[RMDB]
RNA sequence: GGGAACGACUCGAGUAGAGUCGAAAAACGUACGACUACGGUCGUACGAAAGUUAGGGCUGUUCUUCGCUGGAGUAGCUCUGUGACUAUGGGACCAUAGCUGCCUGGCGAAGAAUGGUCCCUUGAAACGGGACAUUUGGAUUCGUCCAAAUGUCCCGAAAAGAAACAACAACAACAAC
Reactivity to 2A3 in 0.01 (KOAc 150mM, MgCl2 10mM, bicine 150mM(pH8.5), 24C), signal-to-noise 2, nucleotides 027 to 126: a000c020g010u030a000c000g020a000c000u040a000c180g100g010u000c010g000u050a000c000g010a040a030a010g160u140u180a010g000g000g000c010u000g010u000u000c000u000u000c040g000c000u030g000g000a290g050u000a000g000c010u000c030u010g040u070g000a030c040u050a250u280g050g150g010a020c010c010a020u000a010g000c000u010g000c000c000u010g000g010c000g000a020a000g000a000a000u000g000g010u260c000c010c000u090u070g110a030a030a040
Notes
The record gives the reactivity of an RNA of 177 nucleotides to 2A3. The data come from the RNA Mapping Database (RMDB), library RFM100. Conditions: 150 mM KOAc, 10 mM MgCl2 and 150 mM bicine (pH 8.5), 24 C.